[RMDB]
The record gives the reactivity of an RNA of 177 nucleotides to DMS. For DMS the reverse transcriptase was MarathonRT.

RNA sequence: GGGAACGACUCGAGUAGAGUCGAAAAGAUAUGGAGUGUACGAGCCUAGGGUCGGAAACGACCCAAAAGGCGAUGAGUACCUCCUAAGUCAAACAUGUCAGUGCCACUUCGGUGGCACUGACAUGAACGACUCUAUCUUCUUCGGAAGAUAGAGUCGAAAAGAAACAACAACAACAAC
Reactivity to DMS in 0.01 (KOAc 150mM, MgCl2 10mM, bicine 150mM(pH8.5), 24C), signal-to-noise 1, nucleotides 027 to 126: g000a020u010a300u010g000g010a040g030u010g000u000a030c010g020a160g000c010c020u000a240g020g010g000u020c000g000g010a090a140a240c010g000a030c010c000c000a020a020a160a040g020g000c000g000a090u020g000a250g060u000a010c040c030u000c000c010u050a020a090g000u000c000a090a100a300c000a020u000g000u000c020a000g020u000g020c000c000a000c010u000u030c070g030g020u000g000g000c000a000c000u000g000a000c000a000u000g000a080a180